[RMDB]
About this RNA
Chemical mapping of a 177-nucleotide RNA with DMS and 2A3. The DMS profile rests on 1,752 reads. The data come from the RNA Mapping Database (RMDB), library OK2TRN.

RNA sequence: GGGAACGACUCGAGUAGAGUCGAAAAGAUGAAAACACCAGGCUGGUGGCUCUGCAGAAACUGGACGAUGAAAUGCCAGGCUUUGCCAGAGGUGACGCUGGCGUCCGUCUCCAUGAAACCGUUAAGCCAUGGCAUGGUUUUUCGAAACCAUGCCAUGAAAAGAAACAACAACAACAAC
Reactivity to DMS in 0.01 (KOAc 150mM, MgCl2 10mM, bicine 150mM(pH8.5), 24C), signal-to-noise 2, nucleotides 027 to 126: g020a100u020g000a090a110a130a080c090a070c040c030a050g020g030c050u000g030g050u000g010g030c030u000c020u000g000c060a030g000a040a080a120c040u000g010g000a030c120g000a090u000g000a100a090a080u000g000c000c000a010g010g000c140u000u000u020g000c070c070a100g030a060g020g010u010g020a070c050g000c000u000g000g000c030g000u000c060c020g020u000c010u010c040c020a010u010g000a100a090a120c040c050g010u000u020a100a090g030c090
Reactivity to 2A3 in 0.01 (KOAc 150mM, MgCl2 10mM, bicine 150mM(pH8.5), 24C), signal-to-noise 2, nucleotides 027 to 126: g020a050u110g040a000a040a100a090c000a020c000c020a010g150g090c010u080g020g090u050g050g050c000u000c000u020g010c000a010g080a090a050a020c020u040g040g010a040c050g040a090u090g080a090a050a080u120g000c000c000a060g130g070c010u000u050u000g020c030c020a100g040a070g120g060u060g020a010c000g000c030u020g010g020c000g050u000c010c000g020u000c010u020c020c030a050u120g030a050a020a000c030c020g100u100u120a090a010g030c030